[RMDB]
Description
This 177-nucleotide RNA was probed chemically with 2A3 and DMS. 2A3 adducts were read by reverse transcription with SuperScript II with manganese. DMS (dimethyl sulfate) methylates the pairing face of unpaired adenines and cytosines. High 2A3 reactivity points to a flexible backbone, as in loops and unpaired stretches. The RNA was probed in 150 mM KOAc, 10 mM MgCl2 and 150 mM bicine (pH 8.5) at 24 C.

RNA sequence: GGGAACGACUCGAGUAGAGUCGAAAAUGUUGUGCGUGUGUGUGGCGUGAUCGCUCACCAAGUAUUUAGCGGGAUUCUACCCUGUUCGUUCCGCCCGCGCGUGAUCGCGAUUGUGUCGAACCGUAACGUUAAUAGGUGGGUUCGCCCACCUAUUAACAAAAGAAACAACAACAACAAC
Reactivity to 2A3 in 0.01 (KOAc 150mM, MgCl2 10mM, bicine 150mM(pH8.5), 24C), signal-to-noise 2, nucleotides 027 to 126: u160g000u030u020g020u000g050c040g030u080g000u030g010u000g080u150g060g000c030g000u130g160a180u150c030g010c000u000c000a000c010c010a050a030g040u040a060u100u220u170a050g040c020g000g060g000a020u030u030c000u010a060c000c000c030u050g030u100u030c030g000u010u040c020c010g030c040c000c000g050c010g000c000g030u040g060a120u180c020g000c010g080a070u070u160g050u020g030u060c020g020a050a120c010c010g030u090a010a070c100
Reactivity to DMS in 0.01 (KOAc 150mM, MgCl2 10mM, bicine 150mM(pH8.5), 24C), signal-to-noise 2, nucleotides 027 to 126: u020g020u000u000g010u000g000c020g000u020g010u010g010u010g030u000g040g000c020g030u010g020a100u010c040g030c010u000c010a020c010c070a050a100g000u000a030u010u010u020a070g010c080g030g010g000a080u010u000c020u000a060c020c000c020u000g010u010u000c010g010u010u000c010c010g000c080c040c030g040c050g000c050g010u020g010a050u000c070g010c000g010a090u000u000g010u000g000u000c020g020a050a150c030c030g020u000a080a100c150